RNA sequence: GGGAACGACUCGAGUAGAGUCGAAAAGAAGAGAAAGGAGACACAGGGACAGUCUCCAGAGGUUCCUAAGGCCUCGAUCGCGCCUGCCGGGAAUCAUGGACUCCCGGUUGUCCAUGAAAGAAGAAGACAGCAUAUAGCACUUCGGUGCUAUAUGCUGAAAAGAAACAACAACAACAAC
Reactivity to DMS in 0.01 (KOAc 150mM, MgCl2 10mM, bicine 150mM(pH8.5), 24C), signal-to-noise 3, nucleotides 027 to 126: g010a090a090g020a110g030a120a110a170g000g000a030g000a000c000a070c150a130g000g000g000a090c060a120g000u000c000u000c020c000a020g010a100g000g020u000u000c050c140u030a090a160g000g010c020c000u010c060g000a060u000c030g010c150g000c000c040u000g000c060c020g020g000g040a050a030u000c020a160u040g030g000a070c060u000c000c000c010g000g000u000u000g010u000c010c030a020u020g010a010a090a080g000a040a060g000a120a090g000a210
Reactivity to 2A3 in 0.01 (KOAc 150mM, MgCl2 10mM, bicine 150mM(pH8.5), 24C), signal-to-noise 3, nucleotides 027 to 126: g020a020a010g100a000g070a090a130a040g000g030a010g010a000c010a000c060a150g060g000g020a000c030a050g020u020c010u000c000c000a010g020a010g000g010u060u110c060c020u110a090a070g080g000c020c000u040c060g050a100u070c030g000c050g010c030c000u020g020c010c010g000g020g000a020a010u070c050a050u130g070g030a010c010u040c000c000c000g010g010u020u060g010u000c010c000a010u100g100a040a070a090g160a080a020g020a000a000g070a020
The record gives the reactivity of an RNA of 177 nucleotides to DMS and 2A3. For DMS, 3,681 sequencing reads were counted. DMS adducts were read by reverse transcription with MarathonRT. The RNA was probed in 150 mM KOAc, 10 mM MgCl2 and 150 mM bicine (pH 8.5) at 24 C. It was measured as part of the RMDB library OK1LIB. 2A3 is a SHAPE reagent: it acylates the 2'-hydroxyl of flexible nucleotides of all four kinds.